The data come from the RNA Mapping Database (RMDB), library OK3TST. This 207-nucleotide RNA was probed chemically with DMS and 2A3. The 2A3 profile rests on 746 reads.
RNA sequence: GGGAACGACUCGAGUAGAGUCGAAAAGGAUCCACUGGCGGAGGUUAUGCUGAUCUGGUGGAGAGCGCCGGGGCCAAGUGGGGGAUCCCUGCUGGCCUCAUGACUCAGUUAAUGGGUAAAGAAUCCAGCGGCGAUCCCACUGCGACCUCCAGCAAGGUAAAUCUCCUUAUUUCGAUAAGGAGAUUUAAAAAGAAACAACAACAACAAC
Reactivity to DMS in 0.01 (KOAc 150mM, MgCl2 10mM, bicine 150mM(pH8.5), 24C), signal-to-noise 1, nucleotides 027 to 156: g010g010a190u010c020c010a090c030u000g030g000c020g030g000a050g030g010u010u000a040u010g020c050u020g000a110u010c070u000g050g010u010g000g010a140g010a060g020c050g000c020c020g020g000g000g010c010c010a070a120g010u000g030g000g010g040g000a080u010c020c030c010u030g110c010u000g010g010c030c010u020c000a010u000g010a050c000u000c010a070g000u010u020a120a150u000g000g020g000u000a050a120a220g010a140a180u010c030c010a050g000c030g010g010c040g000a030u030c010c000c000a030c000u000g010c050g020a030c000c000u000c010c050a080g040c000a060a060g000g000
Reactivity to 2A3 in 0.01 (KOAc 150mM, MgCl2 10mM, bicine 150mM(pH8.5), 24C), signal-to-noise 2, nucleotides 027 to 156: g070g000a040u110c040c000a010c080u060g060g010c020g000g050a030g040g020u080u060a080u300g050c040u070g060a220u120c060u130g050g000u070g000g120a230g000a020g160c010g000c000c010g020g000g000g000c040c000a110a070g000u030g000g030g010g000g000a010u040c030c050c030u000g000c000u000g000g000c000c000u000c000a020u070g020a010c010u010c010a010g010u100u300a130a120u070g000g000g020u120a170a250a110g040a030a130u090c050c040a030g020c000g020g000c000g000a020u000c000c000c000a020c010u060g010c050g020a020c000c000u000c000c000a000g010c000a000a000g010g000